Background:
Chemical mapping of a 177-nucleotide RNA with DMS and 2A3. The reactions ran in a buffer of 150 mM KOAc, 10 mM MgCl2 and 150 mM bicine (pH 8.5), at 24 C. For 2A3, 1,345 sequencing reads were counted. It was measured as part of the RMDB library RFM100. The DMS profile rests on 893 reads. For DMS the reverse transcriptase was MarathonRT. Values cover nucleotides 27 to 126.
RNA sequence: GGGAACGACUCGAGUAGAGUCGAAAAUGCUACAACACUUGGUUAGCUAUUUAGCUUUACUAAUCAAGACGCCGUCGUGCAGCCCACAAAAGUCUAGAUACGUCACAGGAGAGCAUACGCUAGGUCGCGACGGCAUCAUUUUCGAAUGAUGCCGUCGAAAAGAAACAACAACAACAAC
Reactivity to DMS in 0.01 (KOAc 150mM, MgCl2 10mM, bicine 150mM(pH8.5), 24C), signal-to-noise 1, nucleotides 027 to 126: u030g010c000u010a000c030a000a010c170a170c160u000u060g000g050u000u000a060g000c300u000a100u030u050u050a150g000c000u150u060u000a120c000u000a060a000u000c000a000a000g050a170c250g020c000c060g010u000c030g000u000g000c000a030g060c040c000c000a020c180a190a030a000a000g000u050c110u010a050g000a040u000a000c120g000u000c070a020c150a160g010g040a040g060a210g000c070a010u000a040c050g100c020u000a070g000g000u000c000g000
Reactivity to 2A3 in 0.01 (KOAc 150mM, MgCl2 10mM, bicine 150mM(pH8.5), 24C), signal-to-noise 3, nucleotides 027 to 126: u060g020c000u050a020c010a190a010c050a060c080u000u000g000g000u010u040a010g000c080u010a030u130u250u090a080g020c020u080u010u050a060c000u000a010a000u010c010a090a000g050a140c080g110c070c020g020u040c020g030u020g030c020a030g000c060c020c000a050c030a000a100a020a000g020u020c020u060a020g020a110u080a030c010g000u010c050a000c000a080g070g090a090g050a000g060c000a020u070a070c030g000c020u030a030g020g060u070c000g010